RNA sequence: GGGAACGACUCGAGUAGAGUCGAAAAGCUCAGCGGGGAAGGAAACCACGCGUGGAGCACAAGGGCACAAGCCUGCUUGAGACUGUUCCUAUUGCGGGACUGUUUGGGGGAAACCCUGGCCUAGAGAUCCCAUGUCCUAUUGUGCGUGGGACAUGGGCAGGUUUAGUACGUUCGCGUACUAAACCUGAAAAGAAACAACAACAACAAC
Reactivity to DMS in 0.01 (KOAc 150mM, MgCl2 10mM, bicine 150mM(pH8.5), 24C), signal-to-noise 2, nucleotides 027 to 156: g000c020u000c000a100g030c010g010g000g010g000a150a080g000g010a140a110a130c020c010a030c000g010c000g010u000g030g010a050g040c020a100c090a100a120g000g000g020c010a080c110a100a120g050c050c020u000g020c010u000u010g020a070g010a150c030u000g010u000u010c000c000u000a120u010u000g000c030g000g010g000a100c070u000g020u000u000u000g030g020g000g030g000a170a080a170c020c020c000u020g010g020c010c020u000a150g010a140g000a140u000c000c000c000a030u000g000u000c030c000u010a060u010u000g030u000g030c100g010u000g000g020g020a020c000a010u000g000g010g030
Reactivity to 2A3 in 0.01 (KOAc 150mM, MgCl2 10mM, bicine 150mM(pH8.5), 24C), signal-to-noise 7, nucleotides 027 to 156: g000c010u000c020a010g000c010g010g010g000g040a050a150g080g100a110a110a060c030c010a090c040g020c080g300u100g150g010a010g020c020a010c020a060a070g050g010g000c030a040c030a170a060g040c000c010u050g030c030u030u060g020a030g020a060c090u080g010u020u020c000c000u030a130u070u230g080c070g010g010g020a070c020u050g050u170u180u150g040g010g000g000g030a040a050a050c010c010c020u030g060g010c000c010u070a080g000a010g020a130u040c000c000c000a000u000g010u000c000c000u010a040u060u180g060u070g090c100g030u030g010g000g000a000c000a000u000g000g000g000